[RMDB]
RNA sequence: GGGAACGACUCGAGUAGAGUCGAAAAGAUAUGGAAAUUGAGCAGCCAAGGCCGAGUCGGAAACGAUAUCCUUGGAACUACUGCAAGAUGAGUUUCCUAAGUCAAAAUCGUUGGUUCGCCAACGAAACAUAGGGUAAUACUUCGGUAUUACCCUAUGAAAAGAAACAACAACAACAAC
Reactivity to DMS in 0.01 (KOAc 150mM, MgCl2 10mM, bicine 150mM(pH8.5), 24C), signal-to-noise 9, nucleotides 027 to 126: g010a060u010a300u000g000g000a020a040a020u000u000g010a300g010c020a020g000c000c010a010a010g000g020c300c140g010a140g010u000c010g000g000a110a080a180c010g010a010u000a080u000c010c000u000u000g010g010a030a030c040u010a300c020u000g000c000a060a180g010a110u010g010a100g010u000u000u000c000c000u010a070a190g010u020c060a060a070a090a090u000c000g010u000u000g000g010u000u020c270g020c010c010a000a010c010g010a010a050a140
Reactivity to 2A3 in 0.01 (KOAc 150mM, MgCl2 10mM, bicine 150mM(pH8.5), 24C), signal-to-noise 6, nucleotides 027 to 126: g020a020u070a040u170g010g020a010a030a010u040u060g030a040g000c000a000g000c000c000a010a000g020g000c090c130g100a110g100u020c010g020g030a060a080a040c010g010a010u010a050u080c000c010u000u020g010g020a030a010c050u290a030c000u050g000c010a000a000g170a160u300g060a040g080u000u010u030c000c020u030a160a020g060u060c040a040a020a010a300u050c010g000u010u010g040g040u040u080c250g060c080c000a000a000c000g010a010a010a000

The record gives the reactivity of an RNA of 177 nucleotides to DMS and 2A3.
DMS adducts were read by reverse transcription with MarathonRT.
Reactivities are given for positions 27 through 126.
The reactions ran in a buffer of 150 mM KOAc, 10 mM MgCl2 and 150 mM bicine (pH 8.5), at 24 C.